[RMDB]
RNA sequence: GGGAACGACUCGAGUAGAGUCGAAAAGCAUGUUUAUGUGAACCUAAGGAUGAAUUUCAGUGACUGUAGAUUAGAAGAACUGAUUAUAGCAUAGGCUGCUUGGUGUUCACUUUAUUUGCAUCUGUGAGUUUCCAACAAGCCCUAAGUUUACUGACAACGAUUAUUACGUCUUCGGACGUAAUAAUCGAAAAGAAACAACAACAACAAC
Reactivity to 2A3 in 0.01 (KOAc 150mM, MgCl2 10mM, bicine 150mM(pH8.5), 24C), signal-to-noise 5, nucleotides 027 to 156: g010c010a020u090g040u080u120u080a090u120g000u030g020a020a010c020c040u030a070a040g080g040a100u120g060a090a240u050u070u060c030a020g010u020g160a160c030u050g060u190a070g090a280u160u140a080g100a210a010g020a070a040c010u000g010a020u040u080a060u060a050g020c040a050u020a090g110g000c020u030g000c010u020u010g000g020u100g000u030u010c010a010c000u030u070u080a130u050u110u130g040c030a040u010c040u010g030u020g040a060g050u050u100u060c030c000a010a010c040a120a010g040c020c010c010u050a100a000g010u010u050u090a180c020u050g060a030c050a090a030
Reactivity to DMS in 0.01 (KOAc 150mM, MgCl2 10mM, bicine 150mM(pH8.5), 24C), signal-to-noise 2, nucleotides 027 to 156: g000c030a070u000g030u010u000u000a070u030g050u000g010a030a040c050c030u000a040a050g000g020a100u000g010a110a070u000u000u000c000a090g040u000g020a160c040u000g020u000a140g020a190u000u000a130g000a100a090g020a180a060c030u000g020a030u000u020a070u010a050g050c020a080u000a090g030g010c030u020g010c050u000u000g010g000u000g000u000u000c030a040c040u010u000u000a070u010u010u000g020c060a130u000c070u030g000u000g010a130g000u000u010u000c060c040a070a090c030a030a080g020c020c000c000u020a060a170g030u000u000u000a140c060u000g020a130c030a110a250
An RNA of 207 nucleotides, treated with 2A3 and DMS and read out base by base. 2A3 is a SHAPE reagent: it acylates the 2'-hydroxyl of flexible nucleotides of all four kinds. DMS adducts were read by reverse transcription with MarathonRT. Conditions: 150 mM KOAc, 10 mM MgCl2 and 150 mM bicine (pH 8.5), 24 C.